[RMDB]
RNA sequence: GGGAACGACUCGAGUAGAGUCGAAAAGCAAAAUUGCCUUCCACGUGUGCUCCAUUUUCUUCAGUAAUCGAUAGUUCUGAAGAAUGUCGAUUAUUCCUGGAAUAAGUUGAAUAAAACAUUUACAUUCCAUGCUAGUGGCGUUCGCGCCACUAGCAUGAAAAGAAACAACAACAACAAC
Reactivity to 2A3 in 0.01 (KOAc 150mM, MgCl2 10mM, bicine 150mM(pH8.5), 24C), signal-to-noise 2, nucleotides 027 to 126: g080c050a000a100a170a290u300u130g070c100c000u040u000c020c000a040c000g060u040g000u000g080c040u000c070c100a180u100u120u000u000c030u000u000c010a110g000u210a110a000u000c020g000a000u120a120g140u040u000c050u050g210a160a110g000a020a000u040g000u000c000g000a000u000u070a100u220u000c000c000u120g010g000a000a180u080a180a120g130u110u100g140a110a060u120a040a140a030a000c040a000u050u000u080a020c040a040u030u000c000
Structure probing data (2A3) for a 177-nucleotide construct. 2A3 adducts were read by reverse transcription with SuperScript II with manganese. Source: RMDB library OK1LIB, as collected in RNAgym.